[RMDB]
RNA sequence: GGGAACGACUCGAGUAGAGUCGAAAAGGCGGAAUCCCGAAAUCCCUCCUAAACGCGCGCAAAUAAAGGGAGGGAGGGAUGAUCCCGAAAGCGCGCGACGGGGUGAAGGCUCAACGGCCGAAGGCCAACUGCGAUUAAUCUUCGGAUUAAUCGCAGUAAAAGAAACAACAACAACAAC
Reactivity to 2A3 in 0.01 (KOAc 150mM, MgCl2 10mM, bicine 150mM(pH8.5), 24C), signal-to-noise 4, nucleotides 027 to 126: g050g010c010g060g060a040a080u030c000c000c000g000a030a000a020u020c010c010c010u010c010c020u100a110a150a080c020g000c000g020c000g030c020a050a240a060u200a170a150a090g000g000g010a030g010g010g000a020g000g000g000a070u110g010a020u020c000c000c000g020a040a020a000g010c010g000c000g000c020g010a000c000g020g020g000g000u040g050a030a020g050g000c020u050c130a080a070c080g030g000c020c010g070a070a020g070g010c000c000a000
Reactivity to DMS in 0.01 (KOAc 150mM, MgCl2 10mM, bicine 150mM(pH8.5), 24C), signal-to-noise 2, nucleotides 027 to 126: g010g060c000g010g000a140a020u000c000c040c000g000a100a030a060u000c000c000c010u010c020c030u000a040a040a150c090g000c000g000c010g020c000a120a090a020u000a080a150a050g020g000g070a070g010g000g000a070g000g000g000a300u010g000a170u030c000c000c000g000a030a110a020g040c010g000c000g020c000g020a190c050g000g010g000g020u000g010a190a110g000g000c050u030c080a250a110c180g000g070c000c000g000a080a120g000g030c040c030a220